[RMDB]
RNA sequence: GGGAACGACUCGAGUAGAGUCGAAAAGAUAUGGAGGACUCCAGAGGGAGAUCUACCACUCGGAAACGAGUGAUGAUCAUCGAUCUCUGGAGGUCCUCCUAAGUCAAAAGAUGAGUUCGCUCAUCAAGGUAGGUUAUAUGUUCGCAUAUAACCUACCAAAAGAAACAACAACAACAAC
Reactivity to 2A3 in 0.01 (KOAc 150mM, MgCl2 10mM, bicine 150mM(pH8.5), 24C), signal-to-noise 2, nucleotides 027 to 126: g030a020u080a050u190g000g000a020g010g020a030c010u000c010c000a010g010a000g000g000g000a030g010a010u010c000u030a100c040c000a010c000u010c000g040g000a050a090a060c030g010a020g010u010g020a020u040g000a000u010c020a080u300c030g010a100u040c010u010c000u000g000g010a000g000g010u000c000c000u000c000c000u000a000a000g000u000c010a010a010a010a080g010a010u030g000a000g060u100u220c300g130c180u000c000a010u020c040a040a030
Reactivity to DMS in 0.01 (KOAc 150mM, MgCl2 10mM, bicine 150mM(pH8.5), 24C), signal-to-noise 2, nucleotides 027 to 126: g010a040u010a300u010g010g020a010g010g000a300c000u000c010c000a010g000a010g000g000g000a060g010a000u010c000u010a090c140c000a000c000u010c000g000g000a100a080a190c000g000a020g020u000g010a020u000g000a020u000c010a260u010c220g000a120u010c000u000c000u020g010g010a010g020g000u000c000c020u000c000c000u000a010a050g000u000c030a080a090a130a130g000a030u000g010a020g010u010u010c260g010c000u000c010a000u000c020a090a080